Chemical mapping of a 177-nucleotide RNA with 2A3 and DMS. 2A3 is a SHAPE reagent: it acylates the 2'-hydroxyl of flexible nucleotides of all four kinds. The RNA was probed in 150 mM KOAc, 10 mM MgCl2 and 150 mM bicine (pH 8.5) at 24 C. For 2A3, 11,716 sequencing reads were counted. It was measured as part of the RMDB library OK2TST. 2A3 adducts were read by reverse transcription with SuperScript II with manganese.

RNA sequence: GGGAACGACUCGAGUAGAGUCGAAAAGUUAUAGGCAGUACCCUGGAUUGAUCUAAGCCAGUAUCUGUAAAUAGUGUAUUCUAGAAUCACGGGGACUAUAGGGAUCAUCUAGGAUGAUCUAGGACGAACAUGCAGAAUAUUUCGAUAUUCUGCAUGUAAAAGAAACAACAACAACAAC
Reactivity to 2A3 in 0.01 (KOAc 150mM, MgCl2 10mM, bicine 150mM(pH8.5), 24C), signal-to-noise 6, nucleotides 027 to 126: g020u040u030a060u080a090g080g000c020a010g030u070a080c030c000c000u000g020g020a070u060u250g030a030u030c040u120a110a060g060c020c010a020g020u030a020u010c030u040g060u110a020a100a100u090a060g040u030g050u100a100u110u050c040u050a050g080a080a050u050c010a020c040g020g010g010g000a010c020u030a040u120a170g120g020g020a020u000c010a000u000c020u060a050g100g070a050u020g000a010u010c010u010a020g050g040a010c030g000a050
Reactivity to DMS in 0.01 (KOAc 150mM, MgCl2 10mM, bicine 150mM(pH8.5), 24C), signal-to-noise 9, nucleotides 027 to 126: g010u000u000a080u000a060g010g010c050a070g010u000a130c250c140c010u000g010g010a050u000u010g010a100u010c110u010a070a160g010c090c060a040g000u000a090u000c030u000g010u000a060a070a080u000a020g030u000g010u010a060u000u000c060u000a080g010a090a070u000c080a040c030g000g000g000g010a110c050u000a080u000a110g010g000g000a010u000c010a010u000c010u000a100g010g010a030u000g010a030u000c010u000a060g010g010a060c120g010a100